[RMDB]
RNA sequence: GGGAACGACUCGAGUAGAGUCGAAAAGCCGGGAUUGUUUACGGUGGUCGUUGAAGUCAUAACCAUAAGAUGAACGUUAGACUAUGGAAAAUCUAUGAAAGUUUAUCAUAGUUAUUGUGCGACCGAGCUAUAUUUUUAUUUUCGAAUAAAAAUAUAGAAAAGAAACAACAACAACAAC
Reactivity to 2A3 in 0.01 (KOAc 150mM, MgCl2 10mM, bicine 150mM(pH8.5), 24C), signal-to-noise 3, nucleotides 027 to 126: g040c010c000g000g000g080a200u060u070g030u070u110u070a030c010g010g050u080g020g010u020c000g000u010u070g090a060a020g030u030c020a150u070a100a050c010c010a040u050a210a090g050a070u090g040a070a030c060g010u020u040a020g010a010c000u010a040u050g070g000a110a100a040a030u060c020u040a090u070g120a180a260a220g040u060u120u120a070u030c000a000u020a010g000u040u070a100u150u190g030u000g010c040g000a000c000c010g000a000g000
Reactivity to DMS in 0.01 (KOAc 150mM, MgCl2 10mM, bicine 150mM(pH8.5), 24C), signal-to-noise 4, nucleotides 027 to 126: g000c010c010g010g030g000a100u010u030g000u010u000u000a040c040g000g000u010g010g000u000c010g020u000u010g000a070a130g000u030c070a060u000a040a070c070c090a110u030a060a140g010a070u000g000a030a040c070g010u010u020a030g010a050c050u010a090u010g010g010a100a050a090a100u020c020u000a130u020g000a090a100a110g020u010u000u010a020u000c000a040u000a020g000u000u000a020u030u010g010u010g020c030g000a030c020c020g010a080g010